[RMDB]
RNA sequence: GGGAACGACUCGAGUAGAGUCGAAAAACAGUUUAAGGAGCGACCAGCUAACAUUCGUGGUUAUCUCGUCCUCUCCAACUGUACUUAUUAUGAAGAAGUCUUUGACCUUUUUCUUGGCAGUGGUCGAACGGCCAUUACUAUUCGUAGUAAUGGCCGUAAAAGAAACAACAACAACAAC
Reactivity to 2A3 in 0.01 (KOAc 150mM, MgCl2 10mM, bicine 150mM(pH8.5), 24C), signal-to-noise 2, nucleotides 027 to 126: a020c010a000g030u030u070u050a150a060g010g000a000g000c080g020a000c010c010a000g030c010u000a000a010c030a060u140u300c200g180u240g170g000u060u000a000u030c000u000c030g020u000c000c010u040c000u000c000c010a000a010c000u010g020u030a020c000u060u120a090u100u050a160u220g080a040a070g080a080a010g040u010c040u080u120u140g050a040c010c000u050u100u020u080u000c000u020u020g060g000c050a030g020u030g030g020u050c020g000a020
Reactivity to DMS in 0.01 (KOAc 150mM, MgCl2 10mM, bicine 150mM(pH8.5), 24C), signal-to-noise 5, nucleotides 027 to 126: a050c010a010g010u000u000u000a130a180g010g010a020g020c300g000a020c010c080a020g010c080u000a010a020c010a130u010u010c270g020u010g000g010u000u000a010u010c010u000c300g010u000c010c020u000c000u000c090c150a050a030c000u000g010u000a040c050u010u000a090u010u000a070u020g010a060a070g000a050a070g000u000c090u010u000u010g000a060c030c010u000u010u010u010u010c020u010u000g010g020c140a050g000u000g010g010u000c040g000a100